Structure probing data (DMS and 2A3) for a 177-nucleotide construct. 2A3 adducts were read by reverse transcription with SuperScript II with manganese. Reactivities are given for positions 27 through 126. The RNA was probed in 150 mM KOAc, 10 mM MgCl2 and 150 mM bicine (pH 8.5) at 24 C. For DMS the reverse transcriptase was MarathonRT. 2A3 is a SHAPE reagent: it acylates the 2'-hydroxyl of flexible nucleotides of all four kinds.
RNA sequence: GGGAACGACUCGAGUAGAGUCGAAAAGAUAUGGAUCCCAGAGGACAUGCAGAUGAUCGGAAACGAUCCCUGCAACAGCCUCGGGAUCCUAAGUCAAAAGGUUGCAAUCGUUCGCGAUUGCAACCAAGGGUAUGUUAGUGUUCGCACUAACAUACCCAAAAGAAACAACAACAACAAC
Reactivity to DMS in 0.01 (KOAc 150mM, MgCl2 10mM, bicine 150mM(pH8.5), 24C), signal-to-noise 2, nucleotides 027 to 126: g000a020u000a080u020g000g000a010u000c000c000c000a060g030a010g000g030a070c130a140u000g010c000a000g000a070u000g010a010u000c000g000g000a030a010a050c010g020a000u000c020c300c010u010g000c000a050a090c240a120g020c000c010u000c010g010g000g010a000u000c000c000u000a000a040g010u020c020a080a060a190a080g000g010u000u010g010c010a020a010u000c000g010u000u010c170g000c000g000a010u000u000g000c000a000a000c010c010a010a040
Reactivity to 2A3 in 0.01 (KOAc 150mM, MgCl2 10mM, bicine 150mM(pH8.5), 24C), signal-to-noise 2, nucleotides 027 to 126: g010a010u010a010u050g000g000a000u010c020c010c060a040g010a000g000g030a080c140a300u210g000c020a020g040a110u070g000a000u060c000g030g000a010a010a010c010g000a000u000c000c000c030u000g010c000a070a060c130a080g000c000c000u000c000g000g000g010a000u000c000c000u020a000a000g010u000c010a030a020a120a190g000g000u000u000g000c020a000a020u000c000g040u120u070c300g000c020g160a010u000u000g020c000a000a010c000c000a010a000